[RMDB]
RNA sequence: GGGAACGACUCGAGUAGAGUCGAAAAUUGAAGGUAAAACAGCCUGUGGGUGAAACACACCCACAGGGCCCAUUGGGCGCUAGCACUCUGGUAGCACGGUACCUUUGUGCGCCUGUUUUACCGAAGGCGCCGCAGUACUUCGGUACUGCGAAAAGAAACAACAACAACAAC
Reactivity to 2A3 in 0.01 (KOAc 150mM, MgCl2 10mM, bicine 150mM(pH8.5), 24C), signal-to-noise 9, nucleotides 027 to 129: u110u110g060a090a020g010g000u000a000a000a010a000c000a000g000c000c000u010g000u000g000g020g000u010g040a040a090a000c120a000c000a000c050c000c000a000c010a000g000g000g000c000c000c000a030u290u300g000g000g000c010g010c070u100a060g000c000a000c000u010c000u000g010g000u020a010g090c120a040c210g120g080u020a010c010c000u000u000u000g000u000g000c000g000c000c000u000g000u000u000u000u000a000c000c000g000a000a000g040g000c070g020c040
Reactivity to DMS in 0.01 (KOAc 150mM, MgCl2 10mM, bicine 150mM(pH8.5), 24C), signal-to-noise 7, nucleotides 027 to 129: u040u070g000a180a120g020g000u000a000a010a000a010c000a030g010c000c000u010g030u000g000g010g030u030g000a110a170a090c270a200c010a000c000c000c000a000c000a010g040g020g000c000c000c010a030u010u050g010g010g010c010g010c020u020a080g000c000a000c000u010c010u000g020g020u020a020g050c130a060c210g050g000u000a000c030c000u020u000u000g000u020g010c020g000c000c000u000g000u020u020u000u000a000c000c000g000a020a050g020g020c140g030c150